An RNA of 177 nucleotides, treated with DMS and 2A3 and read out base by base.
2A3 adducts were read by reverse transcription with SuperScript II with manganese.
Values cover nucleotides 27 to 126.
For DMS, 2,482 sequencing reads were counted.
DMS adducts were read by reverse transcription with MarathonRT.

RNA sequence: GGGAACGACUCGAGUAGAGUCGAAAAGCCAUUACCGCCAUCCAGAAAUUCCUCGAAACCGAUAUUCCGGUAUUCGGCAUCUGUCUCGGUCAUCAGCUGCUGGCGCUGGCGAGCGGUGCGAAGACUGCUUAGUAGGGUUCUUCGGAACCCUACUAAGAAAAGAAACAACAACAACAAC
Reactivity to DMS in 0.01 (KOAc 150mM, MgCl2 10mM, bicine 150mM(pH8.5), 24C), signal-to-noise 3, nucleotides 027 to 126: g000c030c000a090u000u010a090c070c030g030c030c030a080u000c030c030a070g010a050a120a200u000u000c030c020u010c050g000a030a070a070c040c020g000a150u000a160u020u010c140c020g010g010u010a070u000u010c030g010g020c060a050u010c020u010g010u000c030u000c030g010g000u010c100a060u020c040a160g020c030u000g020c070u030g010g000c110g010c050u010g020g000c030g010a050g000c020g010g010u000g020c050g000a060a060g010a050c060u000g010
Reactivity to 2A3 in 0.01 (KOAc 150mM, MgCl2 10mM, bicine 150mM(pH8.5), 24C), signal-to-noise 2, nucleotides 027 to 126: g050c000c010a040u050u090a040c030c030g070c030c010a060u030c000c000a020g050a040a120a040u060u010c010c010u030c020g020a090a040a030c030c000g020a030u060a220u300u150c050c050g000g000u070a240u020u050c020g020g000c000a040u000c050u110g120u030c000u010c050g010g030u040c030a050u020c010a050g030c000u080g010c060u120g040g070c040g010c060u030g070g020c010g000a000g040c000g030g000u010g010c000g040a040a030g060a030c020u050g030